[RMDB]
An RNA of 177 nucleotides, treated with DMS and 2A3 and read out base by base. Reactivities are given for positions 27 through 126. The DMS profile rests on 876 reads. The reactions ran in a buffer of 150 mM KOAc, 10 mM MgCl2 and 150 mM bicine (pH 8.5), at 24 C. DMS adducts were read by reverse transcription with MarathonRT.
RNA sequence: GGGAACGACUCGAGUAGAGUCGAAAACUCUAGAUUCCGAUAGAGAAUCGAGAGAAAACUGGCUCUCCCUUAGCCAUCCGAGUGGACGCGCGUCCUCCUUCGGAUGCCCAGGUCGGACCGCGAGGAGCAUAUCGUUGUGCUUCGGCACAACGAUAUGAAAAGAAACAACAACAACAAC
Reactivity to DMS in 0.01 (KOAc 150mM, MgCl2 10mM, bicine 150mM(pH8.5), 24C), signal-to-noise 1, nucleotides 027 to 126: c020u010c010u000a090g000a010u000u020c000c050g020a190u010a120g020a110g020a030a010u000c080g000a050g000a000g010a040a000a050a160c180u020g000g010c000u000c040u000c020c020c010u000u000a060g000c160c000a050u000c020c010g020a030g000u000g000g000a050c000g050c260g020c170g000u010c000c030u000c070c080u000u000c020g040g000a000u000g000c120c020c140a120g000g020u010c040g040g020a210c020c030g010c100g000a150g000g000a120g000
Reactivity to 2A3 in 0.01 (KOAc 150mM, MgCl2 10mM, bicine 150mM(pH8.5), 24C), signal-to-noise 1, nucleotides 027 to 126: c000u010c000u010a010g000a020u000u010c020c050g210a280u160a220g200a020g000a070a000u000c000g000a010g000a010g000a070a080a010a010c090u050g000g020c010u010c000u000c000c030c000u080u060a000g000c000c010a010u030c010c000g010a010g070u060g000g020a040c040g090c050g030c160g230u020c020c000u010c000c080u110u060c000g000g000a020u020g030c050c000c020a060g000g040u010c000g000g020a050c010c040g050c010g050a110g120g090a060g020